[RMDB]
RNA sequence: GGGAACGACUCGAGUAGAGUCGAAAACAUCCAGUGUUCGCACUGGAUGAGAGGAAUGUGGAUCGGCAAACUACAUACCAAAAGCUGAGCACGAAAGAGCAACGAUUUCGUCGUUCGCGACGAAAAAGAAUUGAGAAUUGUUCGCAAUUCUCAAUUCAAAAGAAACAACAACAACAAC
Reactivity to DMS in 0.01 (KOAc 150mM, MgCl2 10mM, bicine 150mM(pH8.5), 24C), signal-to-noise 6, nucleotides 027 to 126: c010a020u000c000c000a020g010u000g000u000u010c200g020c000a020c000u000g000g000a010u000g000a070g010a100g000g000a090a040u010g020u000g000g010a070u000c050g010g010c080a100a120a110c050u000a060c100a040u020a140c050c030a060a070a110a110g020c050u000g010a050g000c030a040c050g010a050a050a060g000a080g010c070a050a060c120g010a160u010u000u000c010g000u010c010g010u000u010c190g010c000g000a020c010g000a000a000a030a110a110
Reactivity to 2A3 in 0.01 (KOAc 150mM, MgCl2 10mM, bicine 150mM(pH8.5), 24C), signal-to-noise 7, nucleotides 027 to 126: c000a000u000c000c000a000g000u000g030u040u100c220g020c090a000c000u000g010g000a000u010g000a010g000a000g010g120a130a080u170g010u040g040g050a200u050c040g040g010c050a040a130a050c060u130a050c060a120u150a090c040c010a000a080a020a040g000c030u040g010a010g010c030a010c050g080a100a050a030g090a020g030c020a030a060c050g060a070u010u030u000c000g000u010c000g010u030u090c190g010c010g060a000c000g010a030a010a000a010a000
Notes
The record gives the reactivity of an RNA of 177 nucleotides to DMS and 2A3. It was measured as part of the RMDB library M2PK50. The RNA was probed in 150 mM KOAc, 10 mM MgCl2 and 150 mM bicine (pH 8.5) at 24 C. For DMS, 8,326 sequencing reads were counted. For DMS the reverse transcriptase was MarathonRT. For 2A3, 17,369 sequencing reads were counted.